[RMDB]
RNA sequence: GGGAACGACUCGAGUAGAGUCGAAAACGUACGUGGAGACACGUACGACGAGACUUCGGUCUCGAAUCGGCGGGAGUCAAUGCCGCCUCGUGUAAGGAGUCGGUUGUCGGCGAGCCAACGGACUCAAGAGCUUACACGAACAAUUGAGCAUUGGCAAGGCUAAGUACUAAUUCGUUAGUACUUAGCCAAAAGAAACAACAACAACAAC
Reactivity to 2A3 in 0.01 (KOAc 150mM, MgCl2 10mM, bicine 150mM(pH8.5), 24C), signal-to-noise 3, nucleotides 027 to 156: c010g000u000a000c000g010u010g000g020a050g020a030c000a010c010g000u000a010c010g000a020c010g000a000g000a000c020u100u160c300g090g000u010c020u000c000g020a060a100u120c050g020g000c000g010g020g030a110g020u000c000a000a000u000g000c000c000g000c000c020u020c010g010u010g000u000a000a000g060g000a020g020u020c170g060g030u100u010g020u030c040g030g150c250g060a020g000c020c000a000a000c030g080g000a000c000u010c030a060a040g130a040g200c000u000u000a000c000a000c000g000a030a060c060a050a050u120u260g070a060g040c000a000u000u010g010g000c020a080a120
Reactivity to DMS in 0.01 (KOAc 150mM, MgCl2 10mM, bicine 150mM(pH8.5), 24C), signal-to-noise 2, nucleotides 027 to 156: c000g000u000a000c010g030u010g000g010a300g010a250c010a020c010g000u000a010c000g000a080c040g020a260g000a020c000u030u000c170g040g010u000c020u000c000g020a040a060u000c030g030g020c080g000g000g000a150g010u010c010a090a030u000g040c000c010g000c080c020u010c020g040u000g000u000a030a070g030g000a060g040u000c030g000g020u000u010g040u000c040g000g020c170g010a300g000c290c010a040a080c000g010g000a070c000u000c030a120a090g020a300g010c010u000u000a030c020a030c000g010a040a130c100a120a250u010u000g000a150g020c020a000u010u010g000g010c010a210a300